[RMDB]
RNA sequence: GGGAACGACUCGAGUAGAGUCGAAAACACGAUGACAUCAGUGUGUCCGUCUUCAGUGGGGACCAAGUAGGCAGGCCCAUUACCGUUUAAUGUGCGGGCUGCGGUUAACAGCUCUUCGCUACUGUGGUGUGGACCUUCGGCUAACUCGGGGAUAGCACUGAUUAAUGGGUUUCGACCCAUUAAUCAGAAAAGAAACAACAACAACAAC
Reactivity to 2A3 in 0.01 (KOAc 150mM, MgCl2 10mM, bicine 150mM(pH8.5), 24C), signal-to-noise 6, nucleotides 027 to 156: c040a010c020g100a090u230g120a040c040a120u070c090a140g030u010g000u010g010u090c010c010g020u030c020u070u060c040a050g010u040g020g020g020g030a020c050c030a050a050g040u050a050g150g030c030a020g030g050c000c000c010a020u050u140a060c010c010g030u040u030u140a190a070u180g070u110g020c020g020g010g000c010u010g000c060g060g050u110u140a110a030c030a040g020c010u020c000u210u150c090g040c090u070a030c020u030g020u030g060g010u060g020u110g040g010a040c000c010u020u010c040g020g000c010u020a070a020c000u000c010g020g020g010g030a040u070a030g040c040a010
Reactivity to DMS in 0.01 (KOAc 150mM, MgCl2 10mM, bicine 150mM(pH8.5), 24C), signal-to-noise 2, nucleotides 027 to 156: c030a090c060g010a080u000g010a080c050a280u000c000a130g030u000g010u000g000u010c030c020g000u000c040u000u010c080a080g050u000g010g010g020g010a110c040c030a050a110g030u000a110g010g030c030a140g000g020c030c020c010a060u000u000a040c030c010g000u000u000u000a070a090u000g020u000g040c300g000g020g020c010u000g020c040g010g000u010u010a120a050c020a050g020c020u000c030u000u020c090g020c030u000a030c070u010g000u000g020g050u010g040u000g010g010a080c040c060u000u010c050g010g050c030u010a080a060c010u010c050g030g010g000g020a190u000a090g000c080a200